Chemical mapping of a 207-nucleotide RNA with DMS and 2A3. Source: RMDB library M2RFPK, as collected in RNAgym. The DMS profile rests on 2,556 reads. Values are in units of 0.01, from 0 to 300, in steps of 10. Conditions: 150 mM KOAc, 10 mM MgCl2 and 150 mM bicine (pH 8.5), 24 C. For 2A3, 842 sequencing reads were counted.
RNA sequence: GGGAACGACUCGAGUAGAGUCGAAAAAGUGAGUAUGGCUCGUUACGACGAGCCAUACUCACAACGGUUUUCCCAAAUCGUCGUGAGACGGACCUUGGAAAACCUAGUAUUUAAAUAACUAGGUCAAAUUAGCCUAGAUCCUUCGGGAUCUAGGCAACAUAAACUCUCUGUUCGCAGAGAGUUUAUGAAAAGAAACAACAACAACAAC
Reactivity to DMS in 0.01 (KOAc 150mM, MgCl2 10mM, bicine 150mM(pH8.5), 24C), signal-to-noise 1, nucleotides 027 to 156: a160g010u000g000a010g010u010a010u000g000g000c000u000c000g040u020u000a100c300g040a110c000g000a020g030c080c000a000u010a000c000u000c000a000c010a010a070c060g010g000u000u000u000u000c020c000c000a090a090a050u010c020g020u000c020g020u010g010a300g000a060c000g030g020a060c060c050u010u010g000g000a090a070a060a020c010c000u000a030g010u000a070u000u000u000a160a180a170u010a080a060c010u000a020g030g030u010c050a080a080a200u010u020a170g000c000c000u000a010g000a010u000c010c030u000u020c300g050g000g000a000u000c000u000a000g010g010c000a000a020
Reactivity to 2A3 in 0.01 (KOAc 150mM, MgCl2 10mM, bicine 150mM(pH8.5), 24C), signal-to-noise 2, nucleotides 027 to 156: a000g010u000g000a000g010u000a000u000g000g020c000u000c000g010u020u050a090c230g000a000c020g000a110g050c050c000a000u000a000c000u000c000a000c000a000a000c000g010g020u000u050u030u000c000c000c000a010a020a030u070c000g000u000c000g010u040g070a110g000a040c000g010g010a030c030c040u020u160g060g020a090a100a000a040c000c000u000a020g010u000a110u110u240u140a090a230a180u200a060a020c030u010a000g010g000u040c010a010a040a230u210u130a060g020c000c000u000a000g000a010u000c000c000u040u080c200g050g000g000a000u000c000u000a000g000g030c000a000a000